[RMDB]
An RNA of 177 nucleotides, treated with 2A3 and DMS and read out base by base.
It was measured as part of the RMDB library TTRDES.
Values cover nucleotides 27 to 126.
The DMS profile rests on 1,187 reads.
2A3 adducts were read by reverse transcription with SuperScript II with manganese.
Conditions: 150 mM KOAc, 10 mM MgCl2 and 150 mM bicine (pH 8.5), 24 C.
RNA sequence: GGGAACGACUCGAGUAGAGUCGAAAAGAUAUGGAUUUCAUGUUGAAGCUAUGAAGAGCCUCGGAAACGAGGCUUGGAGCUUACACAUGAGAAUCCUAAGUCAAACCGCAGUGUUCGCACUGCGGAACACGACAGACAUGUUCGCAUGUCUGUCGUGAAAAGAAACAACAACAACAAC
Reactivity to 2A3 in 0.01 (KOAc 150mM, MgCl2 10mM, bicine 150mM(pH8.5), 24C), signal-to-noise 1, nucleotides 027 to 126: g020a000u100a030u170g000g010a000u000u000u070c070a000u030g090u110u300g250a110a050g040c020u050a300u300g030a050a050g030a000g020c000c000u000c010g020g040a080a070a030c000g020a010g060g000c010u010u020g000g010a000g000c020u000u070a090c030a010c010a000u010g010a080g050a050a100u000c000c010u020a150a000g040u020c070a060a130a110c000c000g000c020a000g000u030g090u080u160c300g020c070a010c010u000g040c000g000g000a010a020
Reactivity to DMS in 0.01 (KOAc 150mM, MgCl2 10mM, bicine 150mM(pH8.5), 24C), signal-to-noise 1, nucleotides 027 to 126: g010a060u020a270u000g000g000a010u010u010u000c000a000u000g010u000u010g070a090a050g010c010u010a240u050g020a200a200g000a000g000c000c000u000c000g000g000a110a070a260c010g000a000g000g020c000u000u000g000g010a000g030c000u000u000a070c120a020c010a010u000g000a080g020a020a040u000c040c000u020a080a110g010u000c020a040a160a180c000c000g010c000a020g000u020g000u000u000c300g080c010a010c020u010g000c000g000g000a020a090